[RMDB]
RNA sequence: GGGAACGACUCGAGUAGAGUCGAAAAGAUGGAUUCGUCCAUCACCAUGCGUACUACUUCGGUGAGCGAGGAUCAACGUGAACUACCACACUCCCAAAUAGGAGUGUGGCACGUUGGGAGCUCGCCGAAGUAUCGCUGUUCGAGCGUUCGCGCUCAACCAUUCUGAUAUCUUCGGAUAUCAGAAUGGAAAAGAAACAACAACAACAAC
Reactivity to 2A3 in 0.01 (KOAc 150mM, MgCl2 10mM, bicine 150mM(pH8.5), 24C), signal-to-noise 6, nucleotides 027 to 156: g010a000u010g030g010a020u070u130c290g070u040c090c000a000u010c000a000c010c030a100u200g000c010g040u100a140c060u000a000c000u040u000c000g000g000u020g010a000g010c000g020a230g060g000a020u020c000a000a010c020g010u010g040a080a080c090u150a060c290c000a000c000a010c000u010c010c030c060a170a270a110u270a100g000g000a000g010u010g000u000g000g000c000a000c000g000u000u000g010g000g000a010g000c000u000c000g000c000c000g000a000a000g000u000a000u010c000g000c020u030g080u100u150c090g000a010g000c010g010u110u130c280g010c010g000c100u000c010a010a080
Reactivity to DMS in 0.01 (KOAc 150mM, MgCl2 10mM, bicine 150mM(pH8.5), 24C), signal-to-noise 2, nucleotides 027 to 156: g010a020u020g000g000a060u010u010c300g050u000c000c010a020u000c020a120c080c080a100u020g000c000g020u010a100c150u010a030c000u000u010c010g000g030u000g020a010g030c000g010a140g040g010a120u000c000a050a020c020g000u000g000a160a110c040u010a230c000c010a030c000a000c000u000c000c000c020a050a120a250u000a070g000g010a020g000u000g020u000g010g000c000a000c010g000u010u000g000g010g000a130g010c010u000c000g000c010c000g000a000a010g020u000a010u010c020g010c010u000g000u000u000c090g010a060g010c030g010u000u000c220g030c060g010c020u010c000a040a300